[RMDB]
RNA sequence: GGGAACGACUCGAGUAGAGUCGAAAAACACUAUUCGUAGUGUCAGUUAGAUAUGGAUCGGAGGGAGUCCGACCUAAGACAGAGCUUCGGAAACGAAGCUUCGAGGUUCGGACGAAGAACUCCGAUCCUAAGUCGGGGAUCGUCUUUCGAGACGAAAGGUAAAAUCUAGUUUCGACUAGAUUUUACCAAAAGAAACAACAACAACAAC
Reactivity to 2A3 in 0.01 (KOAc 150mM, MgCl2 10mM, bicine 150mM(pH8.5), 24C), signal-to-noise 3, nucleotides 027 to 156: a000c030a010c010u070a060u130u110c240g070u070a010g000u020g050u060c090a110g050u130u260a050g010a040u040a020u160g010g000a010u000c000g000g010a000g000g020g000a040g010u000c000c000g000a010c000c010u060a230a020g050a060c110a060g040a000g020c000u010u010c020g030g010a050a020a070c020g000a010a000g000c000u010u020c030g010a000g000g000u180u300c040g000g000a000c010g020a080a010g010a000a000c000u000c000c010g000a000u000c000c000u000a000a000g000u000c030g040g000g040g020a070u040c000g020u010c000u070u100u080c200g070a040g000a010c020g050a070a100a010
Reactivity to DMS in 0.01 (KOAc 150mM, MgCl2 10mM, bicine 150mM(pH8.5), 24C), signal-to-noise 2, nucleotides 027 to 156: a010c010a030c010u000a050u000u000c190g010u000a010g040u000g020u000c030a280g050u020u010a090g010a110u000a240u000g010g010a030u000c010g000g030a030g010g060g010a300g000u000c010c000g020a050c000c010u000a090a190g010a130c220a070g020a010g010c020u010u000c000g020g010a110a090a240c000g010a050a010g010c000u000u000c000g010a060g000g040u000u000c050g070g020a070c030g000a040a090g000a040a150c000u000c010c000g000a000u020c000c010u010a000a060g000u000c020g000g020g000g010a170u000c000g020u000c010u000u000u000c170g010a060g010a050c010g020a010a070a080
The record gives the reactivity of an RNA of 207 nucleotides to 2A3 and DMS. The DMS profile rests on 3,301 reads. DMS adducts were read by reverse transcription with MarathonRT. Source: RMDB library RNAMAK, as collected in RNAgym. The RNA was probed in 150 mM KOAc, 10 mM MgCl2 and 150 mM bicine (pH 8.5) at 24 C.